[RMDB]
Structure probing data (DMS) for a 177-nucleotide construct. DMS adducts were read by reverse transcription with MarathonRT. The DMS profile rests on 1,268 reads. The RNA was probed in 150 mM KOAc, 10 mM MgCl2 and 150 mM bicine (pH 8.5) at 24 C.

RNA sequence: GGGAACGACUCGAGUAGAGUCGAAAAGAUAUGGACGUACGCGAGAGGUCGAAGUACUGAGGUGCUUCGGAAACGAAGCACUACCCACCAGUACUUCGACUACCCACCUCGCGUACGUCCUAAGUCACGAAGAAUAGCGGUUCGCCGCUAUUCUUCGAAAAGAAACAACAACAACAAC
Reactivity to DMS in 0.01 (KOAc 150mM, MgCl2 10mM, bicine 150mM(pH8.5), 24C), signal-to-noise 2, nucleotides 027 to 126: g000a080u020a300u010g000g010a050c020g090u010a000c000g010c010g040a080g000a160g030g010u000c010g000a010a010g020u000a000c020u010g020a060g000g040u000g000c000u000u010c000g000g000a130a060a220c010g020a000a010g010c010a000c020u020a020c070c030c070a300c090c000a010g010u000a000c020u000u010c000g000a010c050u000a010c100c110c220a300c080c000u000c000g000c000g000u000a000c010g000u000c000c000u000a000a080g000u000c000a220
Values cover nucleotides 27 to 126. The data come from the RNA Mapping Database (RMDB), library TTRINS.